The data come from the RNA Mapping Database (RMDB), library RNAMAK.
Chemical mapping of a 207-nucleotide RNA with DMS and 2A3.
The reactions ran in a buffer of 150 mM KOAc, 10 mM MgCl2 and 150 mM bicine (pH 8.5), at 24 C.
For DMS, 3,994 sequencing reads were counted.
2A3 adducts were read by reverse transcription with SuperScript II with manganese.
RNA sequence: GGGAACGACUCGAGUAGAGUCGAAAAGGGGUCUUGGUAAGACAGUCGUAUGUAUCAGCUCUGAAGCCUCCACGGAGCCUUGACGCCGCUACGACAAUGACGCCAAGACGGAGGCACCCAAAACAGUACUAUAGCUGUUCGCAGCUAUAGUACUGAAGUAUACUCGUUACUUCGGUAACGAGUAUACAAAAGAAACAACAACAACAAC
Reactivity to DMS in 0.01 (KOAc 150mM, MgCl2 10mM, bicine 150mM(pH8.5), 24C), signal-to-noise 2, nucleotides 027 to 156: g000g040g040g000u000c000u030u000g010g030u000a080a200g000a170c080a140g020u000c030g000u000a030u010g030u000a050u000c020a070g000c030u000c010u020g000a030a100g010c050c010u020c040c000a300c060g030g010a080g000c000c070u020u010g000a020c040g050c080c180g020c080u000a030c000g010a050c030a090a130u000g000a120c130g000c030c010a020a030g020a040c000g000g010a020g080g060c020a140c000c010c020a040a080a080a220c030a020g040u000a000c000u000a010u000a010g030c000u020g010u000u010c300g050c020a030g000c000u000a020u010a000g000u000a000c000u000g000a000a150
Reactivity to 2A3 in 0.01 (KOAc 150mM, MgCl2 10mM, bicine 150mM(pH8.5), 24C), signal-to-noise 8, nucleotides 027 to 156: g080g010g020g010u000c010u010u010g010g000u140a140a080g150a170c090a070g000u000c010g010u030a150u300g050u040a130u250c020a010g000c000u000c000u030g050a090a020g010c000c000u000c010c000a010c000g010g000a000g000c020c040u100u250g050a090c170g050c090c040g050c100u040a010c010g010a000c030a030a210u150g030a040c130g020c000c000a000a000g010a000c000g000g000a000g000g000c000a030c000c000c010a050a130a000a010c010a000g020u030a000c000u000a000u000a000g010c000u010g090u110u090c300g020c080a000g000c000u000a000u010a000g000u000a000c000u000g000a000a010